[RMDB]
RNA sequence: GGGAACGACUCGAGUAGAGUCGAAAAGUCUGACAUUGUGUACCGUGCAGAUGCCCGGAUAUCUGAGUAUUUGCACAUCAACAUAACACCUACACGCCCACUAGUGAAGGAGGCAGAUCACGCAUUCUCCAACUCGGACGUUCGCGUCCGAGUUGGAAAAAGAAACAACAACAACAAC
Reactivity to 2A3 in 0.01 (KOAc 150mM, MgCl2 10mM, bicine 150mM(pH8.5), 24C), signal-to-noise 2, nucleotides 027 to 126: g050u000c050u030g040a020c070a150u150u160g040u000g000u040a090c130c110g030u000g000c000a000g010a050u050g010c030c000c000g000g050a300u260a110u180c040u000g020a020g020u050a000u000u000u080g000c000a000c040a110u040c020a020a080c030a070u150a090a000c010a010c010c000u050a030c040a000c060g020c000c010c010a070c190u110a050g130u080g030a080a080g000g050a000g020g000c020a010g000a070u020c000a010c080g040c050a040u020u110c010
Structure probing data (2A3) for a 177-nucleotide construct. The RNA was probed in 150 mM KOAc, 10 mM MgCl2 and 150 mM bicine (pH 8.5) at 24 C.